[RMDB]
Conditions: 150 mM KOAc, 10 mM MgCl2 and 150 mM bicine (pH 8.5), 24 C. Structure probing data (DMS and 2A3) for a 177-nucleotide construct.
RNA sequence: GGGAACGACUCGAGUAGAGUCGAAAAAUUUGCUCUGUUAGCCUUACAGAAUGUGCAACUUUUCUAACUGCAAUUAAGGCAUGUGACUCAGCUAUGUGUUAUGGUUCAACAACAGCUAAUUUAGUUACCCCAUUUAAUGAUUCGUCAUUAAAUGGGGAAAAGAAACAACAACAACAAC
Reactivity to DMS in 0.01 (KOAc 150mM, MgCl2 10mM, bicine 150mM(pH8.5), 24C), signal-to-noise 6, nucleotides 027 to 126: a100u000u000u010g000c030u000c010u000g010u000u010a110g010c030c020u000u000a040c060a040g010a090a100u020g010u000g010c010a030a050c220u000u010u000u000c100u000a090a110c130u000g020c080a060a110u010u010a050a050g020g000c020a100u000g020u000g010a050c090u010c150a080g010c030u000a070u000g010u000g000u000u010a070u010g020g000u010u010c130a020a020c030a040a040c110a050g010c030u010a040a080u000u000u000a090g010u010u000a170
Reactivity to 2A3 in 0.01 (KOAc 150mM, MgCl2 10mM, bicine 150mM(pH8.5), 24C), signal-to-noise 7, nucleotides 027 to 126: a000u090u080u080g010c010u020c010u020g010u020u050a020g010c000c010u010u040a020c020a040g140a170a140u170g060u050g110c020a060a070c040u130u120u110u040c050u120a070a120c030u040g030c040a050a120u120u060a080a030g040g000c010a010u080g040u020g040a020c020u030c140a020g000c030u060a050u190g090u010g030u070u070a080u120g060g080u060u080c050a020a020c000a010a010c000a020g010c020u020a020a100u110u100u060a070g060u090u140a110
For 2A3, 7,633 sequencing reads were counted. The data come from the RNA Mapping Database (RMDB), library OK2TST.